[RMDB]
RNA sequence: GGGAACGACUCGAGUAGAGUCGAAAAGCCAGUCAGAGGGCGCUACCAUGCAGACUAGGGCUGGCUACUCUUGCACAGAAUCACCUUUCUAUAAUAACCAGUGCAAGAAGGGUUAUUAUACCAUUUAAAAAUCGUGAAUGCUUCGGCAUUCACGAAACAUUGUGAGGACGUUCGCGUCCUCACAAUGAAAAGAAACAACAACAACAAC
Reactivity to 2A3 in 0.01 (KOAc 150mM, MgCl2 10mM, bicine 150mM(pH8.5), 24C), signal-to-noise 4, nucleotides 027 to 156: g010c000c000a000g000u000c000a010g010a050g130g030g110c050g030c030u130a270c080c070a100u190g000c040a070g030a230c010u040a020g020g000g040c000u000g010g000c000u010a020c000u000c000u000u000g000c000a010c000a000g110a100a060u070c020a240c100c000u090u260u140c120u100a010u010a010a010u000a000a000c000c000a000g000u000g010c010a000a000g010a000a000g000g000g020u010u010a010u020u000a000u010a020c000c030a120u090u170u300a070a160a040a040a040u030c000g000u000g000a000a000u000g000c020u030u060c110g080g000c010a000u000u000c000a000c000g000a000a000a000
Reactivity to DMS in 0.01 (KOAc 150mM, MgCl2 10mM, bicine 150mM(pH8.5), 24C), signal-to-noise 1, nucleotides 027 to 156: g000c000c000a020g010u000c030a070g030a070g020g010g000c090g020c100u000a120c120c130a100u030g000c050a180g000a080c010u000a110g030g010g010c010u000g000g010c020u000a110c010u000c010u000u000g000c030a010c020a090g010a120a080u010c110a110c000c030u000u000u000c070u000a040u000a050a020u010a050a020c000c000a300g030u000g000c010a080a030g000a080a070g020g000g010u000u000a010u000u000a040u000a070c200c110a170u000u010u000a020a070a040a130a140u000c010g020u000g000a020a010u000g030c000u000u000c300g020g000c010a000u000u000c000a000c000g030a000a020a050
The record gives the reactivity of an RNA of 207 nucleotides to 2A3 and DMS. It was measured as part of the RMDB library M2RFOK. The DMS profile rests on 2,705 reads.